[RMDB]
Structure probing data (2A3 and DMS) for a 177-nucleotide construct.
The reactions ran in a buffer of 150 mM KOAc, 10 mM MgCl2 and 150 mM bicine (pH 8.5), at 24 C.
For 2A3, 6,125 sequencing reads were counted.

RNA sequence: GGGAACGACUCGAGUAGAGUCGAAAAGAUAUGGAUGUCCAAGGGAGCCUCGUAUCGGAAACGAUACAGAGGCGACGAUCUUGAGACAUCCUAAGUCAAAGCCAGCUAUCGUUCGCGAUAGCUGGCACGCUAAUACCGUGUUCGCACGGUAUUAGCGAAAAGAAACAACAACAACAAC
Reactivity to 2A3 in 0.01 (KOAc 150mM, MgCl2 10mM, bicine 150mM(pH8.5), 24C), signal-to-noise 2, nucleotides 027 to 126: g030a010u020a020u070g010g000a000u000g010u000c010c000a000a020g040g040g010a040g000c000c020u010c010g000u010a000u000c000g030g000a010a010a000c010g000a000u020a000c050a040g020a010g010g010c000g010a010c010g020a000u000c000u020u120g050a300g000a010c000a000u010c000c000u000a000a000g020u000c000a020a060a050g010c000c000a000g010c000u010a010u000c010g110u160u150c300g030c020g170a000u020a010g020c000u000g010g000c010a000
Reactivity to DMS in 0.01 (KOAc 150mM, MgCl2 10mM, bicine 150mM(pH8.5), 24C), signal-to-noise 2, nucleotides 027 to 126: g010a000u010a040u020g000g000a030u000g040u000c010c010a000a000g000g000g000a020g010c000c000u020c010g000u000a000u000c010g010g010a010a010a030c010g010a010u000a000c010a040g010a010g030g010c010g040a020c240g000a010u000c000u000u000g000a280g000a000c000a000u000c000c000u010a000a090g000u000c000a100a180a120g000c000c000a010g020c010u000a020u010c000g030u000u000c280g020c020g000a010u000a010g020c010u000g000g020c040a010